[RMDB]
RNA sequence: GGGAACGACUCGAGUAGAGUCGAAAAGAUAUGGAAUGUGUAGACAUGCUCUUGUGUCGGAAACGACACUUGAGCAACAGCUACCAUUCCUAAGUCAAACAGGUGCCUAGUUCGCUAGGCACCUGAAGGAACUAUUAGACUUCGGUCUAAUAGUUCCAAAAGAAACAACAACAACAAC
Reactivity to DMS in 0.01 (KOAc 150mM, MgCl2 10mM, bicine 150mM(pH8.5), 24C), signal-to-noise 3, nucleotides 027 to 126: g000a030u000a050u020g020g000a000a020u000g000u020g010u000a000g000a050c030a300u020g020c000u000c000u000u000g000u000g010u010c000g020g010a020a020a020c010g010a000c000a010c000u000u000g000a020g030c000a030a020c180a080g010c000u000a000c000c000a000u000u000c000c000u000a000a100g000u000c000a170a170a300c020a020g000g020u000g010c010c000u000a010g000u000u030c280g030c000u000a010g000g010c000a000c000c000u000g000a030a090
Reactivity to 2A3 in 0.01 (KOAc 150mM, MgCl2 10mM, bicine 150mM(pH8.5), 24C), signal-to-noise 3, nucleotides 027 to 126: g010a010u020a000u030g010g030a020a010u000g170u030g020u060a000g060a080c170a300u300g000c000u000c000u000u010g000u000g000u000c000g000g000a020a010a000c000g000a000c000a000c010u000u010g010a000g010c010a000a010c010a000g000c000u000a000c000c000a000u000u020c000c000u000a010a000g020u000c050a070a080a140c000a010g040g000u000g000c000c010u000a010g020u080u080c300g030c220u000a000g010g000c000a000c000c000u000g000a000a020